[RMDB]
RNA sequence: GGGAACGACUCGAGUAGAGUCGAAAAUCAACGUUCCUGGAAGAACAACAAGGGAAAGUGUACGUUAAUCCACCGUCUGGGAAAACUGUUACCUAUGAGUGCAACUGUAGUGGGCAUAGGAUCGGCAAGAUGCGAAACGGUUCGCCGUUUCGCAUCUAAAAGAAACAACAACAACAAC
Reactivity to DMS in 0.01 (KOAc 150mM, MgCl2 10mM, bicine 150mM(pH8.5), 24C), signal-to-noise 1, nucleotides 027 to 126: u020c040a170a270c200g070u000u000c020c010u010g010g020a050a090g000a080a060c110a010a050c080a070a190g010g000g000a000a040a110g000u000g050u000a080c090g040u010u010a080a150u000c020c010a050c100c040g030u010c050u000g000g030g000a050a100a150a030c080u000g000u000u010a100c000c070u000a010u000g010a060g040u000g010c050a050a110c050u000g030u000a030g040u000g010g000g060c030a040u000a010g000g020a100u000c050g040g010c130a060